[RMDB]
The data come from the RNA Mapping Database (RMDB), library OK2TST.
An RNA of 177 nucleotides, treated with 2A3 and DMS and read out base by base.
RNA sequence: GGGAACGACUCGAGUAGAGUCGAAAACGCCAUGGCGUACCUGCAGAUCAUGCAGUUUGCAGAGGCGGAGGCUGACUGCGACCGUGCAUUGAAACGUGAGAUCAGCGUGAAGACGCUGCUGCGGCGCCCCGUGCUUCACUUUCGAGUGAAGCACGGGAAAAGAAACAACAACAACAAC
Reactivity to 2A3 in 0.01 (KOAc 150mM, MgCl2 10mM, bicine 150mM(pH8.5), 24C), signal-to-noise 1, nucleotides 027 to 126: c030g080c050c000a130u090g070g000c000g000u030a070c010c020u040g040c010a010g000a110u050c000a120u120g010c000a000g040u040u030u040g030c010a030g000a000g090g000c030g000g050a110g120g070c060u050g060a300c000u080g060c000g010a050c000c000g100u090g000c000a060u110u080g070a140a090a000c060g040u110g080a020g000a130u100c030a000g020c000g020u050g010a080a050g160a000c010g030c050u000g000c000u030g010c010g010g060c010g030c000
Reactivity to DMS in 0.01 (KOAc 150mM, MgCl2 10mM, bicine 150mM(pH8.5), 24C), signal-to-noise 1, nucleotides 027 to 126: c100g000c080c000a080u020g030g040c010g050u010a060c120c040u020g010c080a020g010a270u010c120a180u000g000c000a040g000u000u000u000g000c000a010g010a300g000g010c000g000g020a170g000g000c030u000g000a160c030u000g000c020g000a070c150c040g000u020g010c090a070u010u000g000a020a050a050c130g000u020g010a090g050a120u000c020a070g000c010g020u000g000a110a110g010a040c040g020c010u000g050c050u010g000c000g010g000c020g020c040

The RNA was probed in 150 mM KOAc, 10 mM MgCl2 and 150 mM bicine (pH 8.5) at 24 C. Reactivities are rounded to 0.1 and cut off at 0 and 3. DMS adducts were read by reverse transcription with MarathonRT.